[RMDB]
RNA sequence: GGGAACGACUCGAGUAGAGUCGAAAAAGCAGGAGUACGCUCCUGCAUGAGUAGACGAAUUGACCCCAACUGAAGUUCAAUUCUAACGUUAAAAGGAGUUUUAUAUGACUGGACGUACGCGUCCAGAUGACGAUUUCAUUCUUCGGAAUGAAAUCAACAAUACAAGAUAGUUCGCUAUCUUGUAUUGAAAAGAAACAACAACAACAAC
Reactivity to DMS in 0.01 (KOAc 150mM, MgCl2 10mM, bicine 150mM(pH8.5), 24C), signal-to-noise 4, nucleotides 027 to 156: a150g000c010a020g030g000a050g050u010a070c300g030c010u000c000c010u010g020c000a020u000g000a140g030u000a120g010a120c090g000a020a050u000u000g000a060c010c010c000c020a140a270c170u000g000a110a060g010u010u010c020a040a040u000u000c020u000a080a120c070g020u000u000a090a070a110a120g000g000a210g000u000u000u010u000a120u000a080u010g010a130c010u000g000g000a040c010g040u000a080c300g040c040g030u010c010c000a000g000a040u000g010a080c070g000a040u000u000u000c010a000u000u000c000u010u000c300g010g010a030a010u010g000a010a010a010u000c010a040a080
Reactivity to 2A3 in 0.01 (KOAc 150mM, MgCl2 10mM, bicine 150mM(pH8.5), 24C), signal-to-noise 4, nucleotides 027 to 156: a000g010c010a000g000g030a000g000u050a040c170g020c090u000c000c000u000g000c000a010u040g010a020g110u170a040g020a050c050g010a040a020u010u030g020a020c010c000c010c030a120a110c140u180g080a120a010g040u080u030c010a010a010u010u000c030u090a060a100c160g060u120u190a070a050a050a030g130g030a080g010u050u030u140u050a210u060a070u180g130a070c020u000g000g010a000c000g000u070a020c190g010c000g110u010c000c000a000g000a010u030g070a020c080g000a000u000u000u010c000a000u000u000c010u010u030c060g090g000a000a000u000g000a000a000a000u000c000a000a010
This 207-nucleotide RNA was probed chemically with DMS and 2A3. The reactions ran in a buffer of 150 mM KOAc, 10 mM MgCl2 and 150 mM bicine (pH 8.5), at 24 C. It was measured as part of the RMDB library M2RFPK. For DMS the reverse transcriptase was MarathonRT. Values cover nucleotides 27 to 156.